This 177-nucleotide RNA was probed chemically with 2A3 and DMS.
RNA sequence: GGGAACGACUCGAGUAGAGUCGAAAAUUAUGUAUAGCUUAGUUUGUCGAUAUGAGGCAUAAUGCCCUACAACGUAGCGGUGUCAUAUAAUUGAGAAGUCUAAAUUUAAGGAUUAGCGUUCUCAAUCACACUUAGAUUGUUUCGACAAUCUAAGUGUAAAAGAAACAACAACAACAAC
Reactivity to 2A3 in 0.01 (KOAc 150mM, MgCl2 10mM, bicine 150mM(pH8.5), 24C), signal-to-noise 9, nucleotides 027 to 126: u040u010a030u050g050u020a080u090a100g010c020u060u030a070g040u170u090u100g050u050c040g020a030u020a100u300g100a110g020g000c020a040u090a170a110u300g000c000c000c000u020a020c020a110a020c040g050u030a000g000c020g060g030u040g020u060c020a010u060a010u020a110a060u030u010g010a000g000a020a010g040u030c010u030a060a100a160u110u200u140a140a090g180g020a080u010u030a010g010c040g070u030u000c000u000c000a010a020u060c030
Reactivity to DMS in 0.01 (KOAc 150mM, MgCl2 10mM, bicine 150mM(pH8.5), 24C), signal-to-noise 9, nucleotides 027 to 126: u000u000a020u010g010u010a090u020a130g010c010u000u010a080g020u020u000u000g010u010c150g000a110u020a070u020g020a120g030g010c010a140u010a090a120u020g010c000c000c010u000a050c040a030a030c040g010u010a020g020c040g000g020u000g000u000c050a020u000a030u010a050a060u000u000g000a020g010a070a070g000u020c010u000a010a030a070u010u010u020a130a120g010g010a080u000u000a010g000c050g000u000u000c000u000c000a020a030u020c150
Notes:
It was measured as part of the RMDB libraries RFM100 and RFMREP. The RNA was probed in 150 mM KOAc, 10 mM MgCl2 and 150 mM bicine (pH 8.5) at 24 C.